[RMDB]
RNA sequence: GGGAACGACUCGAGUAGAGUCGAAAAUUAUAUCGGAGCAAGCUUGGCCAAGUAGAGCCAGAGAAGUGGGUCGAAGUGGGGCGCAAAGCAAGAACGGUCCAAGGGCUAGUUGACCUCCCUCGGCACGAGGACGUGCCUGAUUUUGAGUGGGGGAGGACUCAUACACAACCUUCGGGUUGUGUAUGAGAAAAGAAACAACAACAACAAC
Reactivity to 2A3 in 0.01 (KOAc 150mM, MgCl2 10mM, bicine 150mM(pH8.5), 24C), signal-to-noise 2, nucleotides 027 to 156: u160u100a060u020a060u180c060g030g000a030g000c030a070a080g070c030u080u080g020g000c000c020a130a000g060u030a060g140a040g030c010c010a010g080a000g010a120a010g080u110g030g000g000u020c010g020a070a000g030u020g020g000g000g000c020g000c080a090a090a020g000c030a040a020g030a170a040c070g000g050u080c020c040a080a090g000g000g030c040u080a150g060u040u070g030a060c000c010u000c020c000c000u010c030g020g000c020a000c010g050a230g040g140a040c070g010u010g030c000c000u080g090a220u070u120u130u190g120a090g030u240g000g000g000g040g000a000g000g000a000